[RMDB]
RNA sequence: GGGAACGACUCGAGUAGAGUCGAAAAAAUGCCGCCUCAGUUCCAAGCUCUUUCGUGGCACUGUAAACAGUCCUAUUGAGUUAGGGGCAGUCAAUCACGUUGCGAAGCUAAAUUAUCUGGUCGAGAGUUACGAUUCCCUACUUCGGUAGGGAAUCAACAUACUAUCAGGGUUCGCCCUGAUAGUAUGAAAAGAAACAACAACAACAAC
Reactivity to 2A3 in 0.01 (KOAc 150mM, MgCl2 10mM, bicine 150mM(pH8.5), 24C), signal-to-noise 7, nucleotides 027 to 156: a000a000u090g020c030c020g000c010c020u040c040a060g020u060u020c020c010a060a020g020c020u000c010u030u060u080c080g030u100g020g020c080a010c030u030g060u140a080a120a110c030a050g060u020c000c010u030a050u050u090g060a100g120u040u060a050g000g000g020g020c000a020g020u040c020a000a090u060c010a000c060g010u040u030g030c040g080a050a030g020c040u110a090a100a090u160u120a090u080c080u050g040g000u050c070g030a020g000a010g160u060u080a050c090g000a010u000u000c000c000c000u000a000c000u010u050c140g070g000u000a000g000g000g000a000a000u000c000a000a000
Reactivity to DMS in 0.01 (KOAc 150mM, MgCl2 10mM, bicine 150mM(pH8.5), 24C), signal-to-noise 3, nucleotides 027 to 156: a050a050u000g020c020c020g020c010c020u000c040a130g020u000u020c040c030a120a280g020c020u000c020u000u000u010c050g040u010g020g020c050a080c040u010g010u000a080a100a100c050a130g000u000c010c010u000a060u000u010g000a210g010u000u000a080g040g010g000g030c010a070g030u000c050a090a130u000c070a070c040g010u000u000g020c030g010a080a110g020c040u000a040a050a080u000u000a060u000c040u010g020g030u000c030g010a080g010a110g020u000u000a100c060g000a040u000u010c000c000c000u000a010c010u010u000c250g050g010u000a000g000g000g000a000a000u000c000a040a160
This 207-nucleotide RNA was probed chemically with 2A3 and DMS. For 2A3, 6,792 sequencing reads were counted. Reactivities are given for positions 27 through 156. DMS adducts were read by reverse transcription with MarathonRT. Source: RMDB library M2RFPK, as collected in RNAgym. 2A3 is a SHAPE reagent: it acylates the 2'-hydroxyl of flexible nucleotides of all four kinds.